[RMDB]
RNA sequence: GGGAACGACUCGAGUAGAGUCGAAAAAAAAGAUAUGGAUUCAGCGAAAGCCGAAGAACGAUCAUCACAGUGUUUCGGAAACGAAACAUCACAGUGAUCGGGAGGCUAGCUGAAUCCUAAGUCAAAACUACGUUUUAAUGUUCGCAUUAAAACGUAGAAAAGAAACAACAACAACAAC
Reactivity to DMS in 0.01 (KOAc 150mM, MgCl2 10mM, bicine 150mM(pH8.5), 24C), signal-to-noise 5, nucleotides 027 to 126: a040a070a100a110g010a010u000a140u010g000g000a010u000u000c000a010g000c000g020a120a130a060g010c000c010g000a090a100g010a120a220c010g000a010u000c000a010u000c070a170c300a300g010u000g010u000u000u000c000g000g000a040a020a040c000g000a000a000a000c000a000u000c040a060c260a170g010u010g000a010u000c000g000g000g000a020g030g030c000u000a160g010c000u000g010a010a000u000c000c000u000a000a050g000u010c000a100a090a100a180
Reactivity to 2A3 in 0.01 (KOAc 150mM, MgCl2 10mM, bicine 150mM(pH8.5), 24C), signal-to-noise 4, nucleotides 027 to 126: a000a000a010a060g010a020u040a010u040g000g000a000u010u010c000a010g000c040g130a300a300a010g000c020c030g270a290a010g000a030a000c000g000a000u010c000a000u090c030a020c030a070g010u010g000u010u010u010c010g000g000a010a010a010c000g000a010a010a000c000a000u050c000a020c060a030g000u000g000a000u000c010g010g000g000a010g000g000c020u040a030g000c000u010g000a000a000u000c000c000u000a010a000g000u000c030a000a010a110a140